[RMDB]
RNA sequence: GGGAACGACUCGAGUAGAGUCGAAAAGAUAUGGAUGGUGGGACGCAACAGCUUCACAUCGGAAACGAUGUAAGAAGACAUGCGUUGCACCAUCCUAAGUCAAAAUCAGCGUCUUCGGACGCUGAAACACUCACAAAUUGUUCGCAAUUUGUGAGUGAAAAGAAACAACAACAACAAC
Reactivity to 2A3 in 0.01 (KOAc 150mM, MgCl2 10mM, bicine 150mM(pH8.5), 24C), signal-to-noise 5, nucleotides 027 to 126: g020a020u040a020u080g000g000a000u000g010g050u010g020g150g020a000c010g010c020a230a200c080a300g020c000u010u010c020a010c000a000u010c020g010g050a030a040a010c020g000a000u010g010u100a130a130g000a010a010g020a010c050a130u300g000c010g000u010u010g040c000a000c000c000a000u000c000c000u000a000a000g000u000c020a010a010a000a300u050c000a000g000c000g010u000c010u030u040c220g140g000a000c000g000c000u000g000a000a000a000
Reactivity to DMS in 0.01 (KOAc 150mM, MgCl2 10mM, bicine 150mM(pH8.5), 24C), signal-to-noise 5, nucleotides 027 to 126: g010a060u010a300u000g000g000a010u000g020g020u000g010g000g010a010c000g020c010a080a070c230a260g010c000u000u010c020a120c010a000u000c000g020g000a080a060a160c010g010a010u000g010u010a090a090g010a010a000g010a030c090a280u010g010c010g020u010u000g000c000a000c000c000a000u000c000c000u000a010a040g000u010c030a090a060a150a150u000c010a000g000c010g010u000c000u000u020c240g010g010a020c000g020c000u000g000a010a080a160